[RMDB]
Chemical mapping of a 170-nucleotide RNA with DMS and 2A3. The reactions ran in a buffer of 150 mM KOAc, 10 mM MgCl2 and 150 mM bicine (pH 8.5), at 24 C. For DMS the reverse transcriptase was MarathonRT. For 2A3 the reverse transcriptase was SuperScript II with manganese.

RNA sequence: GGGAACGACUCGAGUAGAGUCGAAAAAAGACCGUAGCGAUGGGGGAGAUGCUAGGAGUAGGCGGCGACCGAAGCGAGGAGGAAAGCAAAGAAAGCCACGGGGCUAGCGAGUGGAUGUUCCGCCCCAAUAGUGCUGGGUUCGCCCAGCACAAAAGAAACAACAACAACAAC
Reactivity to DMS in 0.01 (KOAc 150mM, MgCl2 10mM, bicine 150mM(pH8.5), 24C), signal-to-noise 3, nucleotides 027 to 129: a040a060g030a020c040c010g020u040a080g020c070g050a100u050g010g010g020g070g050a000g020a100u010g040c050u000a030g000g020a040g050u020a070g060g010c120g010g000c000g030a000c030c020g030a050a040g000c160g030a040g040g000a030g000g010a100a020a050g050c030a080a020a080g050a050a050a110g020c050c030a250c090g030g000g010g030c060u050a080g020c150g010a050g020u040g000g000a070u120g050u000u040c040c020g040c000c000c000c000a070a060u060a040
Reactivity to 2A3 in 0.01 (KOAc 150mM, MgCl2 10mM, bicine 150mM(pH8.5), 24C), signal-to-noise 2, nucleotides 027 to 129: a050a000g040a010c000c030g000u040a000g010c060g040a040u130g010g040g020g000g000a010g000a000u070g000c000u030a040g000g010a050g010u090a020g070g080c050g000g000c000g050a000c000c020g020a040a020g020c030g010a020g000g010a000g000g040a000a030a020g040c040a080a000a020g070a080a120a000g080c030c010a040c020g010g010g000g000c010u030a050g060c000g040a010g070u070g060g060a080u120g000u030u000c000c000g030c000c000c000c000a000a050u110a040